[RMDB]
RNA sequence: GGGAACGACUCGAGUAGAGUCGAAAAACUAAAAAAAAUACGGAUCUCCACGUGGCGUGGUCGCAUCAGUCACUCGUAAUUCUUGUUAACUGCUCCAUUUUUUGCGGUGCCCCGCAGUUAUAUCGGUAUCCCAUACUCAGUUCGCUGAGUAUGGGAUAAAAGAAACAACAACAACAAC
Reactivity to 2A3 in 0.01 (KOAc 150mM, MgCl2 10mM, bicine 150mM(pH8.5), 24C), signal-to-noise 2, nucleotides 027 to 126: a050c110u260a110a010a000a000a000a000a000a030u100a010c010g020g030a030u000c000u030c010c010a040c040g020u060g010g000c030g050u030g010g080u110c030g020c070a040u030c040a050g060u050c010a010c030u040c110g050u040a120a130u140u140c100u090u110g050u070u090a010a010c020u000g000c020u030c050c060a100u040u050u030u030u040u250g100c030g080g050u030g010c000c000c000c050g000c040a030g010u090u040a080u060a010u300c020g000g020u000
Reactivity to DMS in 0.01 (KOAc 150mM, MgCl2 10mM, bicine 150mM(pH8.5), 24C), signal-to-noise 1, nucleotides 027 to 126: a010c140u020a010a040a000a200a010a060a000a040u000a120c100g000g000a090u010c010u000c000c040a010c070g010u000g000g010c060g000u000g060g010u000c110g060c040a000u000c060a040g000u000c020a020c000u000c020g090u010a080a080u040u010c090u000u000g000u000u000a110a110c070u030g000c070u030c040c060a060u000u000u030u000u050u000g000c070g000g000u050g020c000c040c010c010g080c070a020g020u020u090a100u040a170u020c040g000g010u000